[RMDB]
RNA sequence: GGGAACGACUCGAGUAGAGUCGAAAAUUUGUGCAUGUUCAUCGGCAGAAUCGCCACCUGGAACGGCGCGAUAGCGUCAGGCCAUACGAUGCCUCGUUCGUCGUAGUUCUGCUCAAUCGCCGCAGCAACGCCCUAUCCCAUUCGUGGGAUAGGGCGUAAAAGAAACAACAACAACAAC
Reactivity to 2A3 in 0.01 (KOAc 150mM, MgCl2 10mM, bicine 150mM(pH8.5), 24C), signal-to-noise 1, nucleotides 027 to 126: u120u030u050g090u030g000c030a040u050g100u110u030c060a050u080c090g030g020c030a020g050a080a080u130c090g030c010c050a040c010c070u000g000g060a040a060c050g050g000c010g000c040g100a140u120a040g050c030g080u090c090a050g010g100c020c020a060u050a100c040g030a040u010g030c020c080u060c020g090u190u020c000g000u000c000g010u000a020g030u040u040c010u000g000c030u060c000a040a020u040c040g050c040c050g010c010a010g000c010a030
Reactivity to DMS in 0.01 (KOAc 150mM, MgCl2 10mM, bicine 150mM(pH8.5), 24C), signal-to-noise 1, nucleotides 027 to 126: u000u010u010g000u030g000c020a040u000g020u020u010c060a080u000c060g000g000c050a070g000a090a050u000c270g020c050c050a070c110c040u000g010g000a120a110c090g010g000c000g000c000g000a030u040a080g000c030g010u000c030a060g040g000c060c100a120u000a020c030g000a040u000g010c000c100u000c110g020u010u000c030g010u000c040g000u000a050g000u010u000c010u010g000c050u000c080a040a070u000c110g020c060c090g000c070a050g010c140a090